[RMDB]
RNA sequence: GGGAACGACUCGAGUAGAGUCGAAAAAGAGGAAAAGCCACUCCUCAGAUGCGCCCAGAGACACCUUCACAGGUCCAGGAGAGAACCUCAGAGCGGGACGGGGCAUGCUCUUCUCCUCUCUGCCUUAGUUGCAAGGGCACAGAGGGGCCAACGUGUCCUAUUAUGUAGGAUUCGUCCUACAUAAUAGAAAAGAAACAACAACAACAAC
Reactivity to DMS in 0.01 (KOAc 150mM, MgCl2 10mM, bicine 150mM(pH8.5), 24C), signal-to-noise 4, nucleotides 027 to 156: a120g000a060g000g000a050a080a080a130g020c060c040a090c070u000c020c000u000c020a140g010a090u000g010c070g010c030c020c020a170g000a180g010a110c040a080c030c020u000u010c070a110c060a060g020g020u000c030c020a080g010g010a100g010a110g000a060a060c040c020u010c040a140g010a110g010c080g020g010g000a070c080g000g010g020g030c010a050u000g000c010u000c050u010u000c010u000c000c000u000c010u000c030u010g000c020c010u000u000a120g010u010u000g010c050a080a210g010g010g010c010a020c010a040g000a040g010g020g010g000c060c110a040a080c090g000u000g030u000c010
Reactivity to 2A3 in 0.01 (KOAc 150mM, MgCl2 10mM, bicine 150mM(pH8.5), 24C), signal-to-noise 8, nucleotides 027 to 156: a000g030a020g000g040a060a090a040a040g090c040c020a040c050u020c000c000u000c010a020g050a130u140g050c050g040c030c020c010a010g020a010g010a040c030a020c020c050u110u100c070a070c060a140g030g000u030c040c030a020g020g010a020g010a000g010a040a040c000c010u040c030a050g010a020g080c090g010g030g040a030c050g010g000g010g010c040a030u080g020c010u010c000u100u020c020u020c000c000u010c000u010c020u000g010c010c000u110u090a090g040u100u110g060c050a050a050g010g000g000c020a010c010a020g000a000g000g010g000g000c010c010a080a060c070g020u030g020u060c000

This 207-nucleotide RNA was probed chemically with DMS and 2A3. For DMS, 12,281 sequencing reads were counted. Reactivities are rounded to 0.1 and cut off at 0 and 3. The RNA was probed in 150 mM KOAc, 10 mM MgCl2 and 150 mM bicine (pH 8.5) at 24 C.